[RMDB]
RNA sequence: GGGAACGACUCGAGUAGAGUCGAAAACUGGAUCCGAAGCCUCUAGAAGGAUAAUAUAGGCACUCCAUACCCUACUCCGACUCAAUACGUCCCCGUCGUACAGAAUGGUAACAUAUCUCUACAAAUAAAAACGUUGUCUCGUUCGCGAGACAACGAAGCGAAAGUUACAGUUCGCUGUAACUUUCGCAAAAGAAACAACAACAACAAC
Reactivity to 2A3 in 0.01 (KOAc 150mM, MgCl2 10mM, bicine 150mM(pH8.5), 24C), signal-to-noise 2, nucleotides 027 to 156: c010u000g030g000a010u100c000c020g080a040a010g100c060c000u060c190u160a140g030a170a130g100g040a030u050a210a130u230a130u070a070g000g030c020a010c010u000c000c000a050u010a060c010c010c010u010a070c010u000c010c010g080a020c010u000c060a120a200u090a210c060g020u020c000c010c010c040g070u080c050g010u030a000c010a030g050a070a020u030g010g000u110a080a000c010a010u200a230u000c000u000c030u060a030c010a070a140a050u270a070a080a000a130a030c000g000u000u000g000u000c010u000c030g000u060u010c060g000c020g140a000g000a020c000a000a000c000g000a000a000

The record gives the reactivity of an RNA of 207 nucleotides to 2A3.
The reactions ran in a buffer of 150 mM KOAc, 10 mM MgCl2 and 150 mM bicine (pH 8.5), at 24 C.
2A3 adducts were read by reverse transcription with SuperScript II with manganese.
Values cover nucleotides 27 to 156.
For 2A3, 591 sequencing reads were counted.